[RMDB]
RNA sequence: GGGAACGACUCGAGUAGAGUCGAAAACAUGUCACUUGGUUCCUGCUUCUCUGGGGGCAUCCAAUUCCAGCUUUUGGAGAGAGCAGAAUGGUGAUUAUUAUUAUGGGAAGGGACCUGGACACCAACCAUGGCUUGGGAGGGACAGUGGGAGUGAAAAGUAUGACUAUGAGUUCGCUCAUAGUCAUACAAAAGAAACAACAACAACAAC
Reactivity to 2A3 in 0.01 (KOAc 150mM, MgCl2 10mM, bicine 150mM(pH8.5), 24C), signal-to-noise 4, nucleotides 027 to 156: c070a030u120g010u010c010a020c020u060u110g140g010u220u120c020c010u010g000c010u030u020c000u010c000u010g010g000g000g010g010c020a070u180c080c060a150a090u230u090c070c050a040g000c000u020u020u040u050g000g000a010g000a010g000a010g000c000a000g030a080a050u070g010g030u000g030a010u000u040a040u070u040a050u090u040a060u120g030g040g030a050a090g050g010g030a060c000c020u010g010g010a050c020a020c150c030a020a040c020c010a050u130g040g000c070u070u100g000g000g040a120g020g030g020a040c040a020g060u090g010g020g010a110g040u110g030a050a050a020a020
Annotation
The data come from the RNA Mapping Database (RMDB), library OK3TST. The record gives the reactivity of an RNA of 207 nucleotides to 2A3.